RNA sequence: GGGAACGACUCGAGUAGAGUCGAAAAAGACGGCUCGCGUCACCGUGACAGCCGCGGAUCUUCGACGCCUCAGGGGUGCGGUUGCCGGUCUGGGCGAUCCCGAGCUUAUGCGUCAGGCGUGGAGGUGCUAAGCACGCCACUUCGGUGGCGUGCUUAGAAAAGAAACAACAACAACAAC
Reactivity to 2A3 in 0.01 (KOAc 150mM, MgCl2 10mM, bicine 150mM(pH8.5), 24C), signal-to-noise 1, nucleotides 027 to 126: a010g020a020c000g000g020c000u020c020g050c000g200u040c020a040c080c020g000u060g070a030c050a000g060c030c000g000c000g060g060a080u060c020u060u000c040g030a050c000g080c070c000u090c060a030g000g000g000g140u080g070c060g020g000u070u000g020c000c030g030g030u040c070u170g070g070g000c010g020a050u010c030c000c030g030a010g030c000u050u050a020u250g000c000g090u000c030a030g060g000c000g000u040g010g100a030g080g020u060g010
Reactivity to DMS in 0.01 (KOAc 150mM, MgCl2 10mM, bicine 150mM(pH8.5), 24C), signal-to-noise 1, nucleotides 027 to 126: a000g000a130c030g000g040c180u030c150g010c100g000u000c090a200c000c020g020u040g000a230c060a000g000c000c030g030c030g050g030a060u100c000u000u000c020g000a130c020g080c000c000u040c130a090g000g000g000g000u040g030c070g000g000u000u000g000c090c100g010g000u000c130u110g000g000g050c000g000a050u000c000c060c020g040a090g000c050u000u070a130u000g000c010g010u000c000a070g000g010c070g000u030g000g010a000g000g000u000g020
Annotation
Source: RMDB library OK1LIB, as collected in RNAgym. An RNA of 177 nucleotides, treated with 2A3 and DMS and read out base by base. Reactivities are rounded to 0.1 and cut off at 0 and 3. High 2A3 reactivity points to a flexible backbone, as in loops and unpaired stretches. For DMS, 1,243 sequencing reads were counted. Values cover nucleotides 27 to 126.